[RMDB]
RNA sequence: GGGAACGACUCGAGUAGAGUCGAAAAUGCUUGAUGGUAAAGGUGUCGAGAUGAUGCGUGACUAUGCCAAUAAGCAGCUUAUUCAGAUGGGCGUUAAGAAGCCGGAAACACCUGAAGAGCAGCAAUGGUUUGUCGAAGCGCAGCAGGCCAAACAAGAGUACUACUAGUACUUCGGUACUAGUAGUACAAAAGAAACAACAACAACAAC
Reactivity to DMS in 0.01 (KOAc 150mM, MgCl2 10mM, bicine 150mM(pH8.5), 24C), signal-to-noise 3, nucleotides 027 to 156: u000g040c000u000u000g030a130u000g000g010u000a040a150a090g030g030u000g020u000c040g010a170g030a110u030g010a050u000g040c030g040u000g020a160c040u000a070u000g030c000c010a060a130u000a110a150g030c030a060g050c030u010u000a090u000u000c030a020g000a030u010g010g010g030c050g000u000u010a090a140g020a060a210g020c000c020g010g010a160a090a300c030a000c020c010u000g010a050a060g010a090g010c030a100g030c040a110a170u000g050g020u000u000u000g000u010c010g010a070a210g000c030g040c040a070g010c030a030g000g040c040c050a040a050a100c040a090a120g020a260
Reactivity to 2A3 in 0.01 (KOAc 150mM, MgCl2 10mM, bicine 150mM(pH8.5), 24C), signal-to-noise 7, nucleotides 027 to 156: u120g010c020u040u060g010a050u070g030g070u130a100a080a080g040g010u060g040u090c070g030a040g040a180u160g030a030u050g020c020g050u090g010a010c030u060a050u180g010c010c000a050a100u180a200a030g010c030a010g000c010u070u150a290u300u090c000a000g010a050u090g030g010g010c020g020u030u030a220a090g060a120a020g080c000c010g020g040a100a180a020c030a010c010c010u010g000a010a010g000a000g010c040a000g000c010a020a110u020g000g000u010u030u080g050u030c040g070a100a030g030c010g000c030a010g000c020a010g040g010c010c010a050a070a020c060a060a030g130a040